[RMDB]
RNA sequence: GGGAACGACUCGAGUAGAGUCGAAAAAACAUCGAUUUAUUGAUUCGAAACAUAUUGCAAUCUGGGGAUGGGUAAGUUUCUAUUAUUAAUUUCUGGAAGGCACUUACAAUCACUUUGAACUAUACAAUCCCUAAUCAUUAUUCGUAAUGAUUAGGGAAAAAGAAACAACAACAACAAC
Reactivity to 2A3 in 0.01 (KOAc 150mM, MgCl2 10mM, bicine 150mM(pH8.5), 24C), signal-to-noise 2, nucleotides 027 to 126: a060a000c050a040u060c020g020a010u040u080u100a140u120u230g100a050u090u040c020g000a040a100a000c050a020u150a040u140u090g000c040a050a030u000c010u050g010g000g020g000a030u030g000g060g040u020a010a010g010u070u160u060c030u050a080u060u010a000u020u040a120a070u050u130u040c030u040g010g000a030a000g040g050c010a000c040u060u030a010c050a030a050u050c000a030c100u040u070u120g060a070a020c020u050a030u120a270c040a020a020
Reactivity to DMS in 0.01 (KOAc 150mM, MgCl2 10mM, bicine 150mM(pH8.5), 24C), signal-to-noise 4, nucleotides 027 to 126: a080a050c090a080u000c020g010a050u010u010u010a070u010u010g000a110u000u000c070g000a090a100a100c170a050u020a060u000u000g000c040a050a050u010c020u000g010g000g010g000a050u000g010g000g010u000a040a040g010u010u000u000c100u010a080u020u000a050u000u000a080a090u010u000u000c040u000g000g000a030a070g010g010c040a030c110u000u000a040c080a080a070u000c050a060c110u010u010u000g000a040a060c100u010a090u000a070c180a070a120